Source: RMDB library M2RFPK, as collected in RNAgym. An RNA of 207 nucleotides, treated with DMS and 2A3 and read out base by base. For 2A3, 1,150 sequencing reads were counted.
RNA sequence: GGGAACGACUCGAGUAGAGUCGAAAAGGAGGACGAAGCAUAUUUCUGUUUCUGGAGGAUUAUUUAUAAUCUGCCGGAAAGUCUUGCAGGUGCCUGGGAUAUGUUCAGUCUGGUAGAAUUAAGCACGAAAACGUGUCCUUGUUCGCAAGGACACGAACAAUGGAGUGUGGUUCGCCACACUCCAUUGAAAAGAAACAACAACAACAAC
Reactivity to DMS in 0.01 (KOAc 150mM, MgCl2 10mM, bicine 150mM(pH8.5), 24C), signal-to-noise 1, nucleotides 027 to 156: g020g010a210g030g030a060c020g000a130a220g030c030a070u000a070u020u000u000c010u010g000u000u010u000c030u000g000g000a020g010g000a020u000u000a010u000u000u000a090u000a070a010u000c000u000g000c000c000g040g010a040a000a040g000u010c060u020u000g000c070a130g020g050u000g040c040c030u000g010g010g010a050u000a020u000g020u000u000c030a290g030u000c000u010g010g000u020a070g010a110a090u000u010a080a110g010c020a090c070g010a090a000a070a100c010g040u000g000u000c000c010u010u020g000u000u000c210g030c050a020a020g000g010a010c000a000c020g030a020a070
Reactivity to 2A3 in 0.01 (KOAc 150mM, MgCl2 10mM, bicine 150mM(pH8.5), 24C), signal-to-noise 2, nucleotides 027 to 156: g020g040a010g030g010a000c030g020a010a030g040c030a020u040a050u040u090u070c020u040g100u010u040u030c020u020g010g000a040g030g010a010u000u040a020u040u270u040a090u060a030a070u020c010u040g120c030c000g000g090a000a020a030g060u080c050u110u090g020c050a100g020g180u110g130c000c000u010g000g000g000a010u040a010u040g080u120u080c090a030g020u000c050u010g010g060u090a050g110a080a080u180u170a040a030g020c080a020c140g040a060a020a050a050c000g000u000g000u000c000c010u040u000g000u050u100c130g000c150a000a000g000g020a010c010a000c010g000a000a000
The reactions ran in a buffer of 150 mM KOAc, 10 mM MgCl2 and 150 mM bicine (pH 8.5), at 24 C.